[RMDB]
RNA sequence: GGGAACGACUCGAGUAGAGUCGAAAAUGAAAGCGCGCCCUAGUGCGCCGUUUGUCGAAAGGGAAGCCGGUUAAUAUUCCGGCACCUGGAUGUGGAUUCUCCACGGCAACGUAACUGAACGCGGAGAGAAUAAGUGGAAUUUCGAUUCCACUUAUUCAAAAGAAACAACAACAACAAC
Reactivity to DMS in 0.01 (KOAc 150mM, MgCl2 10mM, bicine 150mM(pH8.5), 24C), signal-to-noise 9, nucleotides 027 to 126: u030g000a090a090a080g010c060g010c010g010c010c060c140u030a100g020u030g000c030g010c070c050g010u010u010u010g010u010c030g010a090a120a060g000g000g010a140a110g020c000c000g010g010u000u010a110a110u020a240u030u030c000c000g000g030c000a010c010c000u000g000g000a130u010g010u010g000g010a230u020u010c040u010c000c000a060c020g000g000c050a060a060c070g010u020a090a090c170u030g000a070a060c020g010c060g000g000a040g010a130
Reactivity to 2A3 in 0.01 (KOAc 150mM, MgCl2 10mM, bicine 150mM(pH8.5), 24C), signal-to-noise 9, nucleotides 027 to 126: u150g010a030a050a020g080c030g000c000g020c010c030c040u090a080g030u070g180c030g010c020c010g010u030u050u090g100u040c030g040a080a020a030g020g010g020a200a040g000c000c000g010g010u050u060a140a080u050a110u180u090c000c000g000g000c000a010c000c000u010g040g030a090u120g030u070g050g030a090u200u020c050u010c060c000a020c010g000g000c030a050a040c040g050u100a050a050c070u100g090a080a020c020g030c040g050g030a060g010a010